Notes:
Conditions: 150 mM KOAc, 10 mM MgCl2 and 150 mM bicine (pH 8.5), 24 C. Chemical mapping of a 177-nucleotide RNA with 2A3 and DMS.
[RMDB]
RNA sequence: GGGAACGACUCGAGUAGAGUCGAAAAAGCUAUGACGGCAUACGUGCCGUCAUAGCAAUUGAUGAUGAUUUAAACAUUCUUCACUUUGACCUGAAUAUCUUGUGAUGAGAAUUUUCAAUCUGAUAAAUAAACUUCAGUUCUUCGGAACUGAAGUUUAAAAAGAAACAACAACAACAAC
Reactivity to 2A3 in 0.01 (KOAc 150mM, MgCl2 10mM, bicine 150mM(pH8.5), 24C), signal-to-noise 2, nucleotides 027 to 126: a000g030c040u040a040u000g010a000c000g000g020c000a060u080a060c240g100u020g000c000c000g000u010c000a000u000a000g000c050a000a000u050u030g010a010u010g000a000u030g000a000u060u050u040a060a040a030c130a070u030u000c000u030u020c010a010c020u040u010u110g020a020c010c080u120g060a100a060u110a080u170c010u020u060g030u010g020a030u080g030a020g010a040a040u000u000u030u000c060a080a030u010c020u040g010a130u140a210a030a010
Reactivity to DMS in 0.01 (KOAc 150mM, MgCl2 10mM, bicine 150mM(pH8.5), 24C), signal-to-noise 1, nucleotides 027 to 126: a060g000c000u020a000u000g000a000c010g030g050c000a030u010a140c230g040u000g030c080c000g000u000c000a000u040a000g020c030a010a010u000u060g010a130u000g020a060u000g000a050u000u040u050a040a010a130c300a030u000u000c010u010u000c000a020c000u030u000u010g010a000c090c150u000g000a070a110u040a280u000c040u000u000g020u000g010a020u030g000a020g010a040a070u000u010u000u000c150a000a010u010c030u000g030a090u000a020a080a110